An RNA of 177 nucleotides, treated with 2A3 and DMS and read out base by base.
RNA sequence: GGGAACGACUCGAGUAGAGUCGAAAAGAUAUGGAACGGACCCAGGGAGCCGUUCGGAAACGAACGAGCGAAGAACUGGGAACCGUUCCUAAGUCAAAAGCAAAACGCGCUUCGGCGCGUUUUGCAACAAUUAACUGUAGUUCGCUACAGUUAAUUGAAAAGAAACAACAACAACAAC
Reactivity to 2A3 in 0.01 (KOAc 150mM, MgCl2 10mM, bicine 150mM(pH8.5), 24C), signal-to-noise 2, nucleotides 027 to 126: g000a000u100a030u170g000g010a020a000c010g000g050a040c000c000c000a010g000g030g000a010g000c020c010g010u010u010c000g000g020a120a080a010c000g000a010a000c020g020a050g110c010g060a120a030g010a020a020c010u010g000g030g050a120a030c010c000g000u000u000c000c000u000a080a000g020u000c020a070a060a030a040g030c010a010a010a000a010c030g040c040g020c070u100u190c300g120g000c010g000c020g000u000u010u010u010g000c000a000a000
Reactivity to DMS in 0.01 (KOAc 150mM, MgCl2 10mM, bicine 150mM(pH8.5), 24C), signal-to-noise 2, nucleotides 027 to 126: g010a060u000a300u000g000g000a010a000c010g000g010a300c010c000c000a010g000g000g000a110g000c000c000g000u000u000c000g010g000a080a050a180c010g010a010a010c000g020a200g030c000g020a090a130g000a090a160c010u000g000g010g010a010a030c010c000g010u000u000c000c000u000a010a080g000u000c030a100a040a090a100g030c010a020a010a000a000c020g040c000g030c000u000u030c180g040g000c000g010c000g010u000u000u000u010g010c000a050a100

The RNA was probed in 150 mM KOAc, 10 mM MgCl2 and 150 mM bicine (pH 8.5) at 24 C. The 2A3 profile rests on 4,876 reads. DMS adducts were read by reverse transcription with MarathonRT. Values cover nucleotides 27 to 126. 2A3 is a SHAPE reagent: it acylates the 2'-hydroxyl of flexible nucleotides of all four kinds.